Overview:
Chemical mapping of a 177-nucleotide RNA with 2A3 and DMS. Values cover nucleotides 27 to 126. The 2A3 profile rests on 3,703 reads. It was measured as part of the RMDB library OK2TRN.
[RMDB]
RNA sequence: GGGAACGACUCGAGUAGAGUCGAAAAAGGUCAACCAUGAGGUUCUGUACCAUCUGCAGCUAAGCCCUGCGGAGCGUACAUCUAUACAGCAACGAUGGGCCGAUGUUCUGCGCGAGAAGAAGCGUAAACCCUCCUUAUCUUUCGAGAUAAGGAGGGUAAAAGAAACAACAACAACAAC
Reactivity to 2A3 in 0.01 (KOAc 150mM, MgCl2 10mM, bicine 150mM(pH8.5), 24C), signal-to-noise 2, nucleotides 027 to 126: a000g070g010u060c030a060a020c040c020a040u130g060a040g150g000u080u070c070u060g020u020a010c000c000a070u000c000u020g000c000a010g000c010u120a100a010g030c040c010c000u000g030c000g000g000a010g010c020g000u000a010c020a010u000c020u030a150u030a100c090a050g040c020a080a050c050g050a020u040g010g000g020c000c030g030a060u100g050u060u030c050u080g020c030g000c050g040a050g050a180a010g070a070a010g030c010g010u030a120a070
Reactivity to DMS in 0.01 (KOAc 150mM, MgCl2 10mM, bicine 150mM(pH8.5), 24C), signal-to-noise 5, nucleotides 027 to 126: a080g010g010u000c020a080a130c030c030a120u000g010a140g010g000u000u020c090u000g010u010a010c000c090a260u000c010u000g010c000a010g010c040u010a150a130g030c250c300c000u000g000c010g000g010a060g000c260g020u000a010c030a050u000c120u000a070u010a080c080a040g010c040a030a100c100g000a080u000g000g020g000c020c010g010a150u000g000u000u000c060u000g000c040g000c010g000a120g010a100a120g010a090a150g000c030g020u000a060a110